[RMDB]
RNA sequence: GGGAACGACUCGAGUAGAGUCGAAAAGAAAGAAAGAAUUAAAAGCUGUGAUGACAGGUUCUUGCCCCGUAUGACCCUGCGAUGAGUUAUACAAAAGAACGCACUCAAGCCAACCGACUGAGCUCAAAACGCAAUUAAGUUUCGACUUAAUUGCGUUAAAAGAAACAACAACAACAAC
Reactivity to DMS in 0.01 (KOAc 150mM, MgCl2 10mM, bicine 150mM(pH8.5), 24C), signal-to-noise 5, nucleotides 027 to 126: g010a120a080a080g020a070a120a050g020a110a060u000u030a070a120a100a110g000c030u000g010u010g000a060u000g010a080c070a070g010g000u020u010c020u000u010g000c050c020c020c150g000u020a060u010g000a060c020c020c010u010g000c130g010a080u030g000a070g000u010u000a040u000a110c160a050a040a090a090g010a080a070c080g000c060a040c030u000c040a070a090g010c030c040a050a070c040c030g000a060c070u000g000a090g000c030u010c070a050a050
Reactivity to 2A3 in 0.01 (KOAc 150mM, MgCl2 10mM, bicine 150mM(pH8.5), 24C), signal-to-noise 3, nucleotides 027 to 126: g070a010a050a010g110a060a080a000g080a050a040u180u160a110a120a070a030g050c010u010g030u040g080a070u070g070a040c030a060g030g000u020u010c000u020u030g030c000c000c010c020g000u010a040u040g040a030c000c010c020u050g020c050g060a080u100g030a010g030u030u040a060u000a090c030a020a090a010a000g070a050a000c010g000c020a030c010u050c030a020a010g000c000c010a030a030c020c010g050a040c040u080g020a020g000c020u010c050a090a120
An RNA of 177 nucleotides, treated with DMS and 2A3 and read out base by base. The reactions ran in a buffer of 150 mM KOAc, 10 mM MgCl2 and 150 mM bicine (pH 8.5), at 24 C. DMS adducts were read by reverse transcription with MarathonRT. 2A3 adducts were read by reverse transcription with SuperScript II with manganese.